RNA sequence: GGGAACGACUCGAGUAGAGUCGAAAAGAUAUGGACCACCUUGGGAGCUCCUUUCGGAAACGAAAGAAGAGCGAGGAUCAAGACUGGUCCUAAGUCAAAACCCAGUCUGUGUUCGCACAGACUGGGACAUUACUAUUAGCUUCGGCUAAUAGUAAUGAAAAGAAACAACAACAACAAC
Reactivity to 2A3 in 0.01 (KOAc 150mM, MgCl2 10mM, bicine 150mM(pH8.5), 24C), signal-to-noise 6, nucleotides 027 to 126: g000a000u020a010u070g000g000a000c000c000a010c030c010u050u010g060g080g120a090g010c000u000c000c000u010u000u010c010g000g000a020a000a000c000g010a020a010a010g120a280a100g020a000g010c030g020a170g080g080a180u040c000a000a010g030a060c100u130g020g000u000c000c000u010a000a000g000u010c020a020a060a120a300c000c000c000a000g010u000c000u000g040u010g040u070u140c300g070c120a000c000a000g000a000c000u010g000g000g000a010
Reactivity to DMS in 0.01 (KOAc 150mM, MgCl2 10mM, bicine 150mM(pH8.5), 24C), signal-to-noise 7, nucleotides 027 to 126: g010a030u000a080u010g010g000a020c010c000a040c220c010u000u000g000g010g010a110g020c000u000c000c000u000u000u000c010g010g000a020a020a040c010g000a010a000a010g000a110a120g010a010g020c010g000a120g030g010a130u000c000a010a010g010a100c300u010g010g010u000c000c000u000a000a080g000u000c010a100a070a150a160c010c000c000a000g000u000c000u000g030u000g010u000u020c290g030c000a000c000a010g010a000c000u000g000g000g000a020
The record gives the reactivity of an RNA of 177 nucleotides to 2A3 and DMS. DMS adducts were read by reverse transcription with MarathonRT. The RNA was probed in 150 mM KOAc, 10 mM MgCl2 and 150 mM bicine (pH 8.5) at 24 C. The 2A3 profile rests on 26,369 reads.